An RNA of 177 nucleotides, treated with 2A3 and DMS and read out base by base.
The 2A3 profile rests on 782 reads.
It was measured as part of the RMDB library OK2TST.
Conditions: 150 mM KOAc, 10 mM MgCl2 and 150 mM bicine (pH 8.5), 24 C.
For 2A3 the reverse transcriptase was SuperScript II with manganese.
RNA sequence: GGGAACGACUCGAGUAGAGUCGAAAAUACGAAGUCCUAAGAGAGAAGUUGGGGGAAGGAGAAGUUUGGAUGGUUGGGGAUAGGCUUGAUACUGACAUUCUCUUUGCAAAGAAAUUUGGAAUGAAGGGUUAUUGAUGUUCUUCGGAACAUCAAUAACAAAAGAAACAACAACAACAAC
Reactivity to 2A3 in 0.01 (KOAc 150mM, MgCl2 10mM, bicine 150mM(pH8.5), 24C), signal-to-noise 1, nucleotides 027 to 126: u270a050c040g080a070a020g030u020c000c000u050a080a000g030a010g000a000g010a160a020g060u070u270g000g040g000g000g000a000a030g090g000a080g020a090a000g040u000u140u090g080g000a060u030g020g020u100u110g020g000g000g030a030u020a040g020g000c030u050u060g000a010u080a130c010u060g020a030c030a000u020u040c040u030c050u060u070u050g100c020a090a080a000g070a070a140a090u150u100u060g030g020a060a060u120g070a100a010g080g040
Reactivity to DMS in 0.01 (KOAc 150mM, MgCl2 10mM, bicine 150mM(pH8.5), 24C), signal-to-noise 2, nucleotides 027 to 126: u000a150c200g010a100a130g030u000c020c020u010a120a100g010a070g000a070g020a090a070g010u000u000g000g000g000g020g010a120a070g010g010a080g020a060a100g010u010u000u000g010g000a080u000g010g020u020u000g010g000g010g000a050u000a030g000g010c060u020u000g010a080u010a120c070u000g010a130c050a080u010u000c010u000c030u000u000u000g010c070a010a060a090g010a080a060a160u010u010u010g000g010a060a050u010g010a110a110g000g010